RNA sequence: GGGAACGACUCGAGUAGAGUCGAAAAUCUCUCUAGAUUCCCAGAGAGAAUCGAGAGAAAGCUGGCUCUCCCUUAGCCAUCCGAGUGGACGUCCGUCCUCCUUCGGAUGCCCAGGUCGGACCGCGAGGAUUCAUAGGUACUUCGGUACCUAUGAAUCAAAAGAAACAACAACAACAAC
Reactivity to DMS in 0.01 (KOAc 150mM, MgCl2 10mM, bicine 150mM(pH8.5), 24C), signal-to-noise 2, nucleotides 027 to 126: u010c010u000c000u010c020u020a070g000a090u010u000c010c010c050a250g000a160g020a140g010a040a020u000c020g000a040g000a010g000a020a070a090g000c180u010g020g000c020u010c020u000c040c030c030u010u000a090g010c160c020a030u000c020c010g010a060g010u010g000g020a020c050g010u010c150c110g010u010c060c020u000c090c090u000u000c000g000g000a020u010g000c030c060c070a090g000g010u000c030g010g000a160c030c070g010c110g000a120g010
Reactivity to 2A3 in 0.01 (KOAc 150mM, MgCl2 10mM, bicine 150mM(pH8.5), 24C), signal-to-noise 2, nucleotides 027 to 126: u010c000u000c000u000c020u060a130g000a040u000u050c020c070c220a060g050a000g000a010g010a140a000u030c010g000a000g010a000g000a060a150a010g070c120u090g000g000c010u000c010u000c000c020c000u060u100a030g030c020c010a000u010c000c000g010a030g000u030g010g020a020c030g140u050c150c110g000u000c000c080u030c010c090u110u090c020g010g010a000u010g020c000c000c000a030g010g030u000c000g000g030a020c020c000g050c040g100a080g150